[RMDB]
This 207-nucleotide RNA was probed chemically with DMS and 2A3. Source: RMDB library OK3TST, as collected in RNAgym. For DMS the reverse transcriptase was MarathonRT. The reactions ran in a buffer of 150 mM KOAc, 10 mM MgCl2 and 150 mM bicine (pH 8.5), at 24 C.
RNA sequence: GGGAACGACUCGAGUAGAGUCGAAAAUAUACGUACGGAAACCAUCCAAGCUCUGCAUGUGUCGGAUCGGCGUACGGAAACCAUCCCGUACGGAAACCAUCCAGUGCGUACGUACGGAAACCAUCCAGGCGAUAGGCAUGCGAAAGGAUGGUGUUAGCUUCAGGGAAUAUUUCGAUAUUCCCUGAAGAAAAGAAACAACAACAACAAC
Reactivity to DMS in 0.01 (KOAc 150mM, MgCl2 10mM, bicine 150mM(pH8.5), 24C), signal-to-noise 3, nucleotides 027 to 156: u000a100u000a080c030g040u000a050c030g000g020a180a110a150c050c010a080u000c020c020a100a160g040c070u000c040u010g030c080a030u010g030u020g010u000c090g000g010a090u000c060g060g000c010g010u000a070c020g020g000a080a070a100c050c100a180u010c050c000c000g000u010a020c010g000g010a130a110a100c000c010a230u010c090c110a190g010u000g030c000g020u000a100c010g030u000a020c020g000g010a100a090a100c020c020a060u000c030c020a130g020g050c050g000a130u000a160g010g000c050a050u000g000c010g010a080a120a180g000g020a030u010g010g010u000g000u000u010a090g000
Reactivity to 2A3 in 0.01 (KOAc 150mM, MgCl2 10mM, bicine 150mM(pH8.5), 24C), signal-to-noise 3, nucleotides 027 to 156: u200a000u000a000c020g030u000a030c030g070g070a130a120a040c010c000a000u010c020c010a130a000g020c050u060c100u200g010c030a020u090g070u050g090u130c030g060g050a020u010c100g060g020c010g030u030a030c000g000g000a060a040a030c050c020a060u110c010c000c000g000u010a000c000g020g050a020a030a020c020c020a020u140c050c110a090g050u110g150c010g010u030a020c000g000u000a010c000g040g030a070a000a040c000c000a000u030c000c010a150g120g000c030g070a100u130a060g180g000c050a020u050g000c020g050a040a040a080g000g000a000u000g010g020u000g000u020u110a050g030